[RMDB]
RNA sequence: GGGAACGACUCGAGUAGAGUCGAAAAGAUAUGGACUGAGGGAGUCGGAGUGUCGGAAACGACAUGACGACGACGAUCUCAGGUCCUAAGUCAAAGGCUAGGCCUGUGUUCGCACAGGCCUAGCCAACGUAUUAAUGUUGUUCGCAACAUUAAUACGAAAAGAAACAACAACAACAAC
Reactivity to DMS in 0.01 (KOAc 150mM, MgCl2 10mM, bicine 150mM(pH8.5), 24C), signal-to-noise 6, nucleotides 027 to 126: g000a040u010a300u010g010g010a190c000u000g000a020g010g000g010a150g010u000c000g000g000a300g020u000g000u000c000g010g000a100a090a170c000g010a010c000a000u000g010a290c040g010a060c010g000a040c180g000a130u000c000u000c000a010g000g010u000c000c000u000a050a110g000u000c040a080a080a140g010g000c000u000a000g000g000c010c000u000g010u000g000u000u010c220g010c000a020c000a010g000g010c010c000u000a000g000c000c000a010a010
Reactivity to 2A3 in 0.01 (KOAc 150mM, MgCl2 10mM, bicine 150mM(pH8.5), 24C), signal-to-noise 2, nucleotides 027 to 126: g010a000u060a020u130g000g000a000c000u000g000a020g020g010g000a010g000u010c010g020g000a050g010u010g010u000c000g030g060a040a070a070c010g030a000c010a000u030g010a010c000g010a000c000g050a070c000g010a010u020c010u010c020a000g070g110u060c000c000u020a100a040g070u060c060a070a120a100g000g020c000u020a010g000g010c000c000u000g010u000g020u040u130c300g000c110a010c010a000g000g010c000c000u000a000g000c000c000a000a000
Source: RMDB library TTRDEL, as collected in RNAgym. Structure probing data (DMS and 2A3) for a 177-nucleotide construct. DMS (dimethyl sulfate) methylates the pairing face of unpaired adenines and cytosines. The reactions ran in a buffer of 150 mM KOAc, 10 mM MgCl2 and 150 mM bicine (pH 8.5), at 24 C. For DMS the reverse transcriptase was MarathonRT. The DMS profile rests on 10,931 reads. The 2A3 profile rests on 9,304 reads.